[RMDB]
RNA sequence: GGGAACGACUCGAGUAGAGUCGAAAAGGGCAAAUGGGCAGGCUUCAGAAAUGGAUGAGUCUUGAUAGGGGAUGUGCAUGCUGAGGAUAUUCUGUUUUGCCUGUUUGUGCUCGCUUGCCGCUUGUGGCUACCUCUGAUCCUUCGGGAUCAGAGGUAGAAAAGAAACAACAACAACAAC
Reactivity to DMS in 0.01 (KOAc 150mM, MgCl2 10mM, bicine 150mM(pH8.5), 24C), signal-to-noise 2, nucleotides 027 to 126: g000g020g000c010a010a050a050u000g000g010g010c030a060g020g000c070u000u010c030a020g000a030a090a070u000g010g000a060u000g000a160g030u010c030u000u020g010a160u020a090g030g010g000g000a050u010g020u010g030c030a020u000g010c040u000g020a070g010g000a140u000a110u020u010c060u000g020u010u000u000u010g020c010c020u000g020u010u000u000g020u010g020c010u010c050g000c110u000u000g030c020c030g010c180u010u000g000u000g020g000
Reactivity to 2A3 in 0.01 (KOAc 150mM, MgCl2 10mM, bicine 150mM(pH8.5), 24C), signal-to-noise 1, nucleotides 027 to 126: g070g000g000c000a020a030a090u140g010g000g000c050a010g000g040c000u070u070c000a010g050a010a090a010u130g040g050a040u040g020a040g030u040c030u150u150g110a120u240a210g020g000g020g030a010u060g080u160g200c000a030u040g080c010u030g000a020g070g020a010u030a050u120u050c010u020g100u020u060u100u130g000c010c070u030g010u030u080u080g050u060g070c000u030c060g000c080u030u000g070c050c000g070c030u000u080g140u070g050g030